[RMDB]
RNA sequence: GGGAACGACUCGAGUAGAGUCGAAAAGAUAUGGAGGUGUACACAAGACGCGGUCGGAAACGACCGAACUACGUUGUGUGACACCUCCUAAGUCAAAGGCUGUAGAUGCUUCGGCAUCUACAGCCAACUCACUAAGUAACUUCGGUUACUUAGUGAGAAAAGAAACAACAACAACAAC
Reactivity to 2A3 in 0.01 (KOAc 150mM, MgCl2 10mM, bicine 150mM(pH8.5), 24C), signal-to-noise 1, nucleotides 027 to 126: g020a020u050a070u140g000g010a010g090g010u010g000u090a160c000a030c100a170a080g080a020c040g050c010g010g000u000c000g020g080a050a080a060c010g000a030c000c000g000a020a000c050u150a050c000g120u010u060g000u020g020u040g070a010c020a010c000c000u010c000c010u000a010a000g010u000c010a000a170a010g010g000c000u020g000u020a000g060a000u030g000c080u140u240c300g070g000c000a030u000c000u000a000c040a080g000c000c000a000a000
Reactivity to DMS in 0.01 (KOAc 150mM, MgCl2 10mM, bicine 150mM(pH8.5), 24C), signal-to-noise 1, nucleotides 027 to 126: g000a040u000a300u020g020g020a010g010g020u020g000u000a070c000a020c000a080a100g030a050c070g000c000g000g010u020c010g010g000a060a060a140c060g010a010c000c000g000a040a010c110u000a260c030g020u000u000g000u010g000u000g000a040c000a000c000c000u000c000c010u010a000a110g010u000c040a110a150a060g020g040c050u020g070u000a000g000a100u000g040c000u000u000c190g040g000c000a000u000c000u000a000c020a000g000c000c000a030a110
Structure probing data (2A3 and DMS) for a 177-nucleotide construct. Conditions: 150 mM KOAc, 10 mM MgCl2 and 150 mM bicine (pH 8.5), 24 C. For 2A3, 3,665 sequencing reads were counted. For DMS, 1,648 sequencing reads were counted. DMS adducts were read by reverse transcription with MarathonRT.